[RMDB]
RNA sequence: GGGAACGACUCGAGUAGAGUCGAAAAACAUGAUCUACGGAUCAUGAAUCCUCUAAUGAGACCAGGCCGAGUGCAUCAGUACUCGGCACCACUUCGAAGAAGAAGGAAGAGUAUAUACGUAUACUCACUAAGUCGCUUUGUUCGCAAAGCGACUUAGAAAAGAAACAACAACAACAAC
Reactivity to DMS in 0.01 (KOAc 150mM, MgCl2 10mM, bicine 150mM(pH8.5), 24C), signal-to-noise 2, nucleotides 027 to 126: a120c010a020u000g030a070u000c000u000a200c110g010g000a000u000c000a000u000g020a090a050u000c010c040u000c280u040a170a080u020g040a120g020a020c170c160a170g000g040c010c000g000a000g010u000g010c000a140u000c290a140g000u000a000c000u000c000g000g000c000a000c080c110a030c030u010u000c000g000a140a080g000a300a040g000a010a020g000g000a170a180g000a010g000u000a000u000a000u000a060c120g050u000a000u000a000c000u010c000a300
Reactivity to 2A3 in 0.01 (KOAc 150mM, MgCl2 10mM, bicine 150mM(pH8.5), 24C), signal-to-noise 3, nucleotides 027 to 126: a000c000a010u000g000a000u010c000u020a020c300g110g000a000u000c000a010u010g000a000a030u020c040c000u020c030u090a140a130u210g120a040g140a230c080c090a100g010g090c000c000g020a000g010u010g000c020a160u180c070a220g020u010a000c000u010c000g000g000c000a000c010c000a000c000u030u060c020g110a150a120g040a080a030g000a000a010g100g010a080a120g000a000g020u000a000u000a000u000a020c210g080u010a010u000a020c000u000c040a060
Source: RMDB library RFM100, as collected in RNAgym. This 177-nucleotide RNA was probed chemically with DMS and 2A3. The RNA was probed in 150 mM KOAc, 10 mM MgCl2 and 150 mM bicine (pH 8.5) at 24 C. For 2A3 the reverse transcriptase was SuperScript II with manganese.